[RMDB]
The data come from the RNA Mapping Database (RMDB), library OK1LIB. The record gives the reactivity of an RNA of 177 nucleotides to 2A3. For 2A3, 746 sequencing reads were counted. The RNA was probed in 150 mM KOAc, 10 mM MgCl2 and 150 mM bicine (pH 8.5) at 24 C.
RNA sequence: GGGAACGACUCGAGUAGAGUCGAAAACGCGCCCCUCGAGGUCGUCGGACAGGUUCUCGACGAGAGUGGCGAACUUCCCCUCGAGUUCGACGUAGGCCCUGAAGUUCUCGCGUCCAGUGCCGGUCGCGCAUGCCACCCUGUUCGCAGGGUGGCAUGCAAAAGAAACAACAACAACAAC
Reactivity to 2A3 in 0.01 (KOAc 150mM, MgCl2 10mM, bicine 150mM(pH8.5), 24C), signal-to-noise 1, nucleotides 027 to 126: c050g040c020g000c030c000c000c000u000c010g140a170g050g200u040c000g010u000c110g070g000a010c090a270g130g000u200u000c210u010c020g010a080c000g000a000g000a000g020u040g020g000c000g000a030a010c010u010u050c000c000c000c000u050c070g070a050g020u200u180c050g040a020c060g040u080a020g000g120c000c000c000u030g060a160a020g000u070u000c070u020c010g020c010g010u030c000c020a030g100u080g060c000c000g010g020u050c050g000c010